[RMDB]
RNA sequence: GGGAACGACUCGAGUAGAGUCGAAAAGAUAUGGACUUUAAGGUCCUUGGAUUUAUAGGCGAAAGGACGUAUGUCGGAAACGACAUACGUCUGAGUAGCCUAUUGUCAGGACCUGAAGUCCUAAGUCCGACUGAGUAAAGUUCGCUUUACUCAGUCGAAAAGAAACAACAACAACAAC
Reactivity to DMS in 0.01 (KOAc 150mM, MgCl2 10mM, bicine 150mM(pH8.5), 24C), signal-to-noise 2, nucleotides 027 to 126: g000a130u000a300u020g000g010a020c000u000u010u000a070a020g020g000u000c000c000u010u010g000g020a040u000u020u000a000u010a010g000g010c000g010a130a140a300g000g000a020c000g000u010a000u000g010u000c000g040g000a140a110a240c040g020a020c000a000u000a010c000g010u000c000u000g000a020g000u000a130g000c000c000u000a000u000u000g000u000c000a040g000g000a010c000c000u000g000a020a010g000u010c000c000u000a030a080g010u010c040